[RMDB]
RNA sequence: GGGAACGACUCGAGUAGAGUCGAAAAUCAUCCUCGAGUUUCUUGAUGGUUCUCCUGCUCUUCCGGAGCCUUCUUUCGAGGUCUUCCGCGUCUUUUCUUGCUUGGAUCCAUUUCUCGAGGACGUCCUACCGGAACAUAACUUCGGUUAUGUUCCGGUAAAAGAAACAACAACAACAAC
Reactivity to 2A3 in 0.01 (KOAc 150mM, MgCl2 10mM, bicine 150mM(pH8.5), 24C), signal-to-noise 1, nucleotides 027 to 126: u100c000a000u000c000c000u000c020g020a030g030u140u200u100c110u190u270g010a010u010g010g000u090u010c000u020c060c000u010g000c000u030c030u120u000c020c000g000g000a010g000c010c010u050u070c030u110u290u130c110g020a000g000g060u010c060u120u030c020c010g010c080g050u060c060u010u160u100u040c100u130u060g030c000u040u070g030g000a000u010c000c000a030u010u060u020c010u010c000g010a010g010g000a000c010g050u000c000c010u000